RNA sequence: GGGAACGACUCGAGUAGAGUCGAAAAUUGGUGUGCUCAGAGCCCCUGGUGAAGAUGCGAGUUUGCAAUGUCCCCCGCCUCAUCAACAACUUUGUAGCCCGCAAGUACGUGGUGAAAGAGACGGCGUUCACCGUCAGUCUAUUCUUUACGGACGGGGCAAUGACCAGUGAUUCGUCACUGGUCAUUGAAAAGAAACAACAACAACAAC
Reactivity to DMS in 0.01 (KOAc 150mM, MgCl2 10mM, bicine 150mM(pH8.5), 24C), signal-to-noise 3, nucleotides 027 to 156: u000u000g020g000u000g040u000g010c010u000c050a150g010a210g030c020c040c040c030u020g020g020u000g020a000a110g000a090u000g010c020g010a080g010u000u010u000g050c030a060a080u010g000u000c000c020c000c010c020g010c030c040u000c050a150u020c040a030a070c040a050a090c050u000u010u010g000u020a200g010c000c010c010g030c020a060a110g040u000a050c050g040u010g030g040u010g010a070a080a130g000a130g000a030c020g030g000c020g010u010u010c080a040c030c000g010u000c020a080g020u000c030u000a170u000u000c050u010u000u000a080c030g020g030a100c030g020g010g020g000
Reactivity to 2A3 in 0.01 (KOAc 150mM, MgCl2 10mM, bicine 150mM(pH8.5), 24C), signal-to-noise 2, nucleotides 027 to 156: u060u060g030g010u040g040u050g030c010u040c090a070g030a090g100c060c010c010c000u070g010g040u060g040a070a020g010a060u150g020c060g020a070g050u030u080u110g090c060a120a170u190g060u190c000c000c000c000c030g000c010c020u020c000a080u050c000a010a110c000a000a000c100u110u100u060g020u020a040g000c000c000c050g010c010a080a070g040u080a020c060g020u000g030g040u020g000a100a040a000g020a010g000a010c030g000g050c010g000u070u080c110a080c160c000g020u020c020a010g000u010c000u000a150u070u000c000u000u040u020a020c040g020g000a000c000g020g000g000g000